[RMDB]
RNA sequence: GGGAACGACUCGAGUAGAGUCGAAAAGCUUGGGAAUCCAAGAAUUCUGCAUUUUUAGCAGGCUCCCUAGGAAUUCUUAUGCACAGCCAAAGCACUGCUCUUAAGGGUUGGUGUGGAAGCCUAAGCCUACGGUCUAUUACUUCGGUAAUAGACCGUAAAAAGAAACAACAACAACAAC
Reactivity to DMS in 0.01 (KOAc 150mM, MgCl2 10mM, bicine 150mM(pH8.5), 24C), signal-to-noise 2, nucleotides 027 to 126: g010c000u000u040g000g000g000a150a050u010c000c020a080a060g010a050a100u000u000c000u000g020c010a130u010u000u010u000u000a110g020c000a060g030g010c050u020c010c030c000u010a110g000g010a060a050u000u010c030u020u010a170u010g000c010a070c300a170g030c020c020a020a140a200g000c030a050c040u000g040c010u000c000u000u010a060a090g050g000g030u000u000g000g020u000g000u000g010g000a200a190g010c000c020u000a100a150g020c050c170
Reactivity to 2A3 in 0.01 (KOAc 150mM, MgCl2 10mM, bicine 150mM(pH8.5), 24C), signal-to-noise 1, nucleotides 027 to 126: g040c020u040u000g000g090g030a180a140u060c010c000a030a030g060a050a070u150u110c000u040g000c010a150u000u000u040u070u300a040g020c050a000g000g000c000u050c010c000c000u060a080g080g100a050a080u090u030c010u100u120a080u220g000c040a050c010a050g040c000c010a050a030a010g000c010a000c040u000g080c000u000c000u150u300a080a170g090g000g000u070u130g130g020u120g000u010g000g050a010a010g000c000c000u060a230a070g040c050c000